[RMDB]
RNA sequence: GGGAACGACUCGAGUAGAGUCGAAAACAAGGAGCAGGAAAAGAGGAAGAAGAAAGCGUCCACCCUCCUCAGCGAAGUACGAGCGCAGCCAUUCCUGCAGUUGGGCAGCGUACGGUUCCAGCGGACAAUCCUACCGCAUAUUCGUAUGCGGUAGGAUAAAAGAAACAACAACAACAAC
Reactivity to DMS in 0.01 (KOAc 150mM, MgCl2 10mM, bicine 150mM(pH8.5), 24C), signal-to-noise 3, nucleotides 027 to 126: c080a080a100g030g010a170g030c010a040g000g000a030a060a100a100g020a060g010g000a060a070g000a120a120g000a060a060a080g010c060g010u010c030c000a130c020c000c030u000c020c050u000c040a080g010c030g000a090a080g020u000a020c130g010a110g000c050g010c050a030g010c030c050a120u000u000c010c010u000g010c030a100g030u000u000g020g020g020c010a030g000c030g000u000a030c050g000g000u000u000c020c040a090g000c040g030g020a060c140a080
Reactivity to 2A3 in 0.01 (KOAc 150mM, MgCl2 10mM, bicine 150mM(pH8.5), 24C), signal-to-noise 2, nucleotides 027 to 126: c040a030a050g080g020a050g050c030a010g030g060a020a030a070a110g050a020g040g030a020a090g030a010a030g080a040a180a020g060c040g050u000c010c010a010c000c000c010u010c010c000u050c030a050g020c020g100a140a010g020u100a050c060g020a060g040c060g020c020a020g030c000c010a070u020u050c000c010u020g020c010a010g020u070u040g050g030g000c000a020g040c040g010u050a020c040g030g020u040u050c010c010a020g050c040g080g020a030c000a030